[RMDB]
This 177-nucleotide RNA was probed chemically with 2A3 and DMS. High 2A3 reactivity points to a flexible backbone, as in loops and unpaired stretches. Conditions: 150 mM KOAc, 10 mM MgCl2 and 150 mM bicine (pH 8.5), 24 C. The data come from the RNA Mapping Database (RMDB), library OK2TRN. Values are in units of 0.01, from 0 to 300, in steps of 10.

RNA sequence: GGGAACGACUCGAGUAGAGUCGAAAAACAUGAUCAUCUGCUGACAGGCCAGUACCUGAUCACUGGUACGUACGCGCCGUACAGCGCAUAGUCUCUGUGCGUACGAUGAUCAGCGCGGCGCUGAUCGGAGAUCGGUGCAAUUCGUUGCACCGAUCUCAAAAGAAACAACAACAACAAC
Reactivity to 2A3 in 0.01 (KOAc 150mM, MgCl2 10mM, bicine 150mM(pH8.5), 24C), signal-to-noise 3, nucleotides 027 to 126: a000c030a080u100g030a040u030c010a010u010c060u090g050c030u030g100a050c030a070g010g010c030c020a060g030u090a040c000c010u030g030a080u090c050a010c080u070g120g030u070a020c010g010u010a000c030g010c030g000c010c010g090u130a060c080a040g020c020g000c010a050u090a170g060u050c030u000c040u140g000u000g000c000g020u010a010c050g040a110u080g010a030u010c000a010g010c060g000c040g050g080c090g000c080u000g030a110u020c010g050
Reactivity to DMS in 0.01 (KOAc 150mM, MgCl2 10mM, bicine 150mM(pH8.5), 24C), signal-to-noise 2, nucleotides 027 to 126: a080c130a080u000g000a010u010c050a040u000c050u020g010c030u000g020a160c090a120g020g010c110c020a100g030u000a090c130c040u020g000a050u000c020a030c110u020g000g010u000a050c010g000u000a030c040g040c010g040c020c060g020u030a070c210a070g010c020g000c010a070u010a070g010u000c080u000c050u000g010u000g010c000g000u000a050c050g020a050u010g020a020u000c020a000g000c090g000c090g000g000c020g000c040u030g000a050u020c050g010